[RMDB]
RNA sequence: GGGAACGACUCGAGUAGAGUCGAAAAGCCAUAUCCCGGAGAUGUCGACCGGUUCGAGGUGGUGGCGGGUGCCGUCGGAACCCUUGUCCGUCCGGGGCCGCAUGGCGAUGGGCGCCCCGUUGGCGGCCCAUACGCCGCCUUUCGAGGCGGCGUAUGGAAAAGAAACAACAACAACAAC
Reactivity to DMS in 0.01 (KOAc 150mM, MgCl2 10mM, bicine 150mM(pH8.5), 24C), signal-to-noise 2, nucleotides 027 to 126: g010c030c040a080u010a150u000c020c010c010g010g010a120g000a070u010g020u010c070g010a070c060c120g010g010u000u000c070g000a070g010g020u000g000g020u010g020g010c060g000g000g010u000g010c030c000g010u000c030g000g010a070a120c060c020c070u000u010g010u000c020c030g000u010c030c020g010g010g000g000c080c080g000c060a060u000g000g000c030g000a100u000g000g000g010c030g010c020c020c070c110g000u010u010g010g010c000g010g000c090
Reactivity to 2A3 in 0.01 (KOAc 150mM, MgCl2 10mM, bicine 150mM(pH8.5), 24C), signal-to-noise 1, nucleotides 027 to 126: g030c020c000a080u070a100u180c020c020c030g050g010a030g020a030u160g070u200c070g020a080c000c010g020g070u110u080c030g020a020g040g000u050g060g040u060g000g000c110g010g030g070u030g050c040c000g030u060c000g050g130a120a090c020c000c010u080u080g060u030c010c020g010u000c000c000g010g000g000g010c100c030g090c050a060u120g100g020c070g060a050u070g050g050g000c070g020c030c030c000c010g040u050u020g000g010c040g020g010c020